[RMDB]
Conditions: 150 mM KOAc, 10 mM MgCl2 and 150 mM bicine (pH 8.5), 24 C. This 207-nucleotide RNA was probed chemically with DMS and 2A3. It was measured as part of the RMDB library OK3TST. Values cover nucleotides 27 to 156. The 2A3 profile rests on 3,440 reads.

RNA sequence: GGGAACGACUCGAGUAGAGUCGAAAAGUUAACAACUAUGAGGUACUUUGUCAAGAUAGGUAUAGCUCAACAUUGCUAUUGUGGUAAGGAUGCUCGUUGUUACAAUAGUGCGACACACUCGUUCUAUUGUUUCAACCAUGCAACAGGCUGUGAUUACUAGUGAUCGAGAAUUCGUUCUCGAUCACUAAAAAGAAACAACAACAACAAC
Reactivity to DMS in 0.01 (KOAc 150mM, MgCl2 10mM, bicine 150mM(pH8.5), 24C), signal-to-noise 2, nucleotides 027 to 156: g030u000u000a060a120c030a060a080c060u010a160u000g010a110g070g030u000a020c020u000u000u000g010u010c030a100a130g020a090u000a030g010g000u000a060u000a030g010c020u010c010a040a120c080a070u000u020g000c020u000a080u000u010g020u000g010g040u000a090a080g020g010a150u000g000c010u010c150g010u000u010g030u000u000a020c010a000a020u000a010g020u000g000c000g000a020c050a220c210a070c160u010c000g030u000u000c010u000a030u000u000g000u000u000u000c000a020a040c030c070a070u030g050c030a030a090c100a070g050g010c020u000g020u010g000a140u000u010a080c120
Reactivity to 2A3 in 0.01 (KOAc 150mM, MgCl2 10mM, bicine 150mM(pH8.5), 24C), signal-to-noise 5, nucleotides 027 to 156: g090u090u110a110a050c060a040a020c060u080a060u160g030a050g010g020u040a040c030u100u130u100g050u120c080a080a040g050a210u130a070g070g020u060a040u050a060g040c020u020c070a020a080c050a170u090u120g030c020u050a070u100u110g020u040g040g020u040a040a100g070g020a070u100g010c010u010c060g010u000u000g010u010u000a000c000a000a000u000a000g010u010g020c010g020a020c000a000c030a050c290u020c010g000u020u000c000u000a000u010u000g000u000u000u000c000a000a000c000c020a020u160g010c020a050a040c000a020g040g010c020u010g030u080g110a090u090u160a070c060